[RMDB]
This 177-nucleotide RNA was probed chemically with DMS and 2A3. The RNA was probed in 150 mM KOAc, 10 mM MgCl2 and 150 mM bicine (pH 8.5) at 24 C. For 2A3 the reverse transcriptase was SuperScript II with manganese. For DMS the reverse transcriptase was MarathonRT. Source: RMDB library OK1LIB, as collected in RNAgym.
RNA sequence: GGGAACGACUCGAGUAGAGUCGAAAAGGUCAUCGACCAAUUCGGGUACGGCGAUGACGUCGAUCCGGCCAGUACCGCCGCGGUCGGGCAACUCGGCCAACUCAGGGAGCAGUGCCGUGCGGCAAAGACCCUGAAACUGAUUCGUCAGUUUCAGGGUAAAAGAAACAACAACAACAAC
Reactivity to DMS in 0.01 (KOAc 150mM, MgCl2 10mM, bicine 150mM(pH8.5), 24C), signal-to-noise 4, nucleotides 027 to 126: g000g000u010c020a030u000c020g000a120c000c040a110a160u000u020c070g030g010g000u020a080c240g000g010c030g000a030u000g000a210c300g020u000c060g000a030u010c070c020g010g000c000c040a120g000u020a070c030c070g000c030c000g020c080g030g000u040c040g000g000g020c060a090a100c050u000c020g000g000c020c030a140a080c110u010c150a100g020g000g040a060g020c190a110g000u020g010c020c000g000u020g000c090g000g020c030a110a060a120g010
Reactivity to 2A3 in 0.01 (KOAc 150mM, MgCl2 10mM, bicine 150mM(pH8.5), 24C), signal-to-noise 6, nucleotides 027 to 126: g070g020u020c010a030u030c060g210a300c010c000a050a040u160u080c080g020g020g080u140a100c070g040g040c000g020a020u020g010a020c000g000u030c010g000a030u010c040c000g000g000c000c010a030g020u090a090c010c010g020c010c000g010c050g030g090u100c040g010g000g000c010a040a100c020u000c010g130g000c030c020a080a070c100u100c110a050g080g050g000a070g040c050a030g060u030g040c010c010g020u050g010c010g000g000c000a020a070a030g050